[RMDB]
RNA sequence: GGGAACGACUCGAGUAGAGUCGAAAAGUCAUGCCUUCGGGCAUGACAGGUACCGAGAGGUACCAAAUAGCGUACAGGAGACUCAGACUGUACGCUAAAAAAGUGUGUGUUCAAUAAGCUCCAAUUGAACACACACUAAAAUGGAGCAAGGGUGUCACGUAGGAGGAUUAUUCGUAAUCCUCCUACGAAAAGAAACAACAACAACAAC
Reactivity to DMS in 0.01 (KOAc 150mM, MgCl2 10mM, bicine 150mM(pH8.5), 24C), signal-to-noise 1, nucleotides 027 to 156: g020u000c010a030u000g120c000c030u000u000c300g090g000g000c000a020u000g000a000c030a010g000g030u000a000c000c010g000a260g000a300g000g010u030a000c010c000a070a010a100u000a010g000c000g030u000a000c020a030g020g020a130g030a110c040u000c080a070g000a250c010u020g020u000a020c010g030c020u000a000a000a060a110a050a040g040u010g030u040g050u000g000u000u000c000a000a000u000a060a100g050c040u000c020c010a090a050u010u000g000a000a000c000a010c000a000c000a000c010u010a000a030a080a090u000g010g010a070g010c000a100a080g010g010g020u000g000u000c040a180
Reactivity to 2A3 in 0.01 (KOAc 150mM, MgCl2 10mM, bicine 150mM(pH8.5), 24C), signal-to-noise 3, nucleotides 027 to 156: g010u000c010a000u000g010c000c000u060u100c250g020g000g020c000a000u000g000a000c010a000g010g000u000a000c000c000g010a020g000a020g040g000u000a000c000c000a020a010a040u070a000g000c010g000u000a000c000a000g030g040a080g090a150c040u020c100a020g030a070c000u010g000u000a000c000g000c000u010a030a000a010a000a000a010g000u000g000u000g000u000g000u000u000c000a020a010u060a120a050g050c040u030c050c020a020a030u000u000g000a000a000c000a000c000a000c000a000c000u000a000a000a000a010u160g040g010a030g000c070a080a050g070g010g010u050g030u050c040a020
This 207-nucleotide RNA was probed chemically with DMS and 2A3. The RNA was probed in 150 mM KOAc, 10 mM MgCl2 and 150 mM bicine (pH 8.5) at 24 C. For DMS the reverse transcriptase was MarathonRT. As a SHAPE reagent, 2A3 marks flexible, mostly unpaired nucleotides at the ribose 2'-OH. Values cover nucleotides 27 to 156.